[RMDB]
RNA sequence: GGGAACGACUCGAGUAGAGUCGAAAACAACAGAAGAUGCAACUCGGUCAGAUCGUGCUUUUCUAAUUGAGGCCGUUCAAACAGCAAUUGAUGCCGGGGCAACUGUCAUCAACAUUCCGGACACGGAACCAUGGUAUUAUUUCGAUAAUACCAUGGUAAAAGAAACAACAACAACAAC
Reactivity to DMS in 0.01 (KOAc 150mM, MgCl2 10mM, bicine 150mM(pH8.5), 24C), signal-to-noise 9, nucleotides 027 to 126: c070a120a120c140a090g010a080a100g010a070u000g010c040a090a100c040u000c040g010g000u010c160a110g010a050u000c050g020u010g010c020u000u010u010u010c100u010a070a130u010u010g010a050g000g010c030c020g000u000u000c040a070a080a110c160a080g010c130a080a110u010u010g010a080u000g010c020c020g000g000g010g010c120a050a100c060u000g000u010c030a030u000c050a040a060c150a120u000u000c020c010g000g010a120c300a080c050g010g010a050
Reactivity to 2A3 in 0.01 (KOAc 150mM, MgCl2 10mM, bicine 150mM(pH8.5), 24C), signal-to-noise 9, nucleotides 027 to 126: c020a000a010c010a030g110a100a020g040a100u060g010c010a060a120c020u010c030g020g030u070c060a030g000a060u040c020g070u110g080c010u120u120u110u040c100u120a200a270u120u160g030a030g040g000c010c010g020u020u020c030a080a100a110c040a040g080c040a070a230u100u120g040a040u120g030c020c000g010g020g010g000c020a040a060c040u060g050u100c020a040u030c010a020a050c000a070u090u000c010c000g040g020a090c120a030c150g000g020a010